[RMDB]
RNA sequence: GGGAACGACUCGAGUAGAGUCGAAAAUGUGCGCUGAUGACCCUGACGAUGUCAAAAGGGAGGCUUCCGAAAAGUGGAUUGAACGACAUUUUGCACGGAGGGGGAAGGAGCCACCGCGGCGAGAGCACCAUAUCAUAUUAUUCGUAAUAUGAUAUGGAAAAGAAACAACAACAACAAC
Reactivity to DMS in 0.01 (KOAc 150mM, MgCl2 10mM, bicine 150mM(pH8.5), 24C), signal-to-noise 9, nucleotides 027 to 126: u020g020u000g000c080g010c020u000g010a110u020g000a290c030c010c000u000g010a290c040g000a080u020g010u040c020a020a030a060a040g010g010g000a270g000g000c020u000u000c010c010g010a080a060a100a160g030u040g000g000a050u040u010g010a060a080c070g000a180c030a050u000u000u010u000g000c040a050c040g000g010a300g000g000g000g000g010a140a080g010g010a100g000c020c030a050c040c060g010c080g010g000c030g000a090g000a120g010c110a210
Reactivity to 2A3 in 0.01 (KOAc 150mM, MgCl2 10mM, bicine 150mM(pH8.5), 24C), signal-to-noise 9, nucleotides 027 to 126: u120g030u030g010c080g000c040u050g040a100u070g100a110c000c010c000u000g010a030c020g140a190u060g100u150c030a030a010a020a010g030g020g010a040g030g010c000u030u000c020c010g120a110a120a060a060g180u240g030g020a080u090u090g050a200a050c020g050a010c040a040u020u030u020u060g030c040a020c010g000g000a030g010g010g010g010g010a020a030g040g040a010g000c000c000a020c010c020g050c020g040g000c040g020a060g010a020g060c020a020
Structure probing data (DMS and 2A3) for a 177-nucleotide construct. The RNA was probed in 150 mM KOAc, 10 mM MgCl2 and 150 mM bicine (pH 8.5) at 24 C. The DMS profile rests on 38,580 reads.